The record gives the reactivity of an RNA of 177 nucleotides to 2A3 and DMS. It was measured as part of the RMDB libraries RFM100 and RFMREP. DMS adducts were read by reverse transcription with MarathonRT.
RNA sequence: GGGAACGACUCGAGUAGAGUCGAAAACACGGUCACUUCCGAAGCGCUUUAGUACCUUCCGUCCCGAAACCGCCAACUGCCCGGGAGGCUUUAUACCCGCGCUUGGUCGGGGAUCCACAGGGCCCCGAGGCUUAACUGAUUUCGAUCAGUUAAGCCUAAAAGAAACAACAACAACAAC
Reactivity to 2A3 in 0.01 (KOAc 150mM, MgCl2 10mM, bicine 150mM(pH8.5), 24C), signal-to-noise 7, nucleotides 027 to 126: c040a010c020g040g000u040c010a020c070u060u010c030c010g060a050a020g020c020g010c030u070u110u160a040g040u080a080c000c010u020u020c030c010g030u030c000c000c000g010a090a040a010c020c030g020c010c030a050a040c090u070g010c010c010c000g010g000g010a040g040g010c000u050u110u040a150u070a040c010c010c030g010c010g000c020u040u040g040g020u020c000g000g000g020g010a060u050c010c010a080c040a140g020g040g000c000c000c000c000g010
Reactivity to DMS in 0.01 (KOAc 150mM, MgCl2 10mM, bicine 150mM(pH8.5), 24C), signal-to-noise 5, nucleotides 027 to 126: c050a110c080g010g000u010c050a070c040u010u000c010c040g020a100a090g010c060g030c030u010u010u010a080g010u010a100c070c020u010u000c030c030g030u000c010c000c000g010a030a120a130c080c060g000c020c020a060a120c070u020g020c010c030c010g000g010g010a090g010g000c140u010u010u010a100u030a150c060c040c030g020c140g010c050u000u020g010g010u010c000g010g000g000g010a050u020c010c040a100c090a150g000g010g010c000c000c000c010g000